[RMDB]
RNA sequence: GGGAACGACUCGAGUAGAGUCGAAAACGGCAAAAAAGCAAACUUGACCACCAAGGAUAAAAGAGGUCUUAUCCAAGGAUGCAAAAGAUAAUCUCACUUUUGACACCCACUGAUCUCGAACUUAAAGAAAACCGAGACUACUUCGGUAGUCUCGGAAUCUAUAGUUUCCCUUCGGGGAAACUAUAGAAAAAGAAACAACAACAACAAC
Reactivity to 2A3 in 0.01 (KOAc 150mM, MgCl2 10mM, bicine 150mM(pH8.5), 24C), signal-to-noise 3, nucleotides 027 to 156: c010g030g000c010a010a050a000a070a020a050g110c100a150a080a070c060u040u090g060a140c050c000a010c020c000a060a030g030g000a070u040a100a040a000a020g020a010g000g000u000c000u000u050a020u040c030c020a060a030g010g010a030u060g010c000a010a020a020a010g020a060u110a210a290u150c040u020c060a040c010u020u020u020u000g100a090c000a050c000c020c010a030c050u060g000a030u010c010u010c030g010a040a030c030u130u180a090a040a100g060a040a080a020a010c000c000g020a000g000a010c000u000a000c010u020u030c150g080g000u000a000g020u000c000u000c000g000g000a000a000
Reactivity to DMS in 0.01 (KOAc 150mM, MgCl2 10mM, bicine 150mM(pH8.5), 24C), signal-to-noise 1, nucleotides 027 to 156: c090g020g000c040a000a060a060a070a000a040g010c040a040a170a080c040u010u000g000a190c070c000a130c010c010a150a300g000g000a100u000a010a070a090a060g000a070g000g000u010c020u000u020a060u000c040c060a080a300g030g000a000u000g000c040a020a020a080a040g000a020u010a020a090u000c080u020c030a100c020u000u000u000u010g000a080c020a060c000c000c010a140c080u040g030a020u000c000u000c020g000a100a090c100u000u000a080a020a080g000a090a040a070a110c010c010g090a010g010a000c010u000a000c020u000u000c300g040g000u000a000g010u000c010u000c010g000g000a000a020
Structure probing data (2A3 and DMS) for a 207-nucleotide construct.
Reactivities are given for positions 27 through 156.
The data come from the RNA Mapping Database (RMDB), library M2RFPK.
For 2A3 the reverse transcriptase was SuperScript II with manganese.
The 2A3 profile rests on 1,800 reads.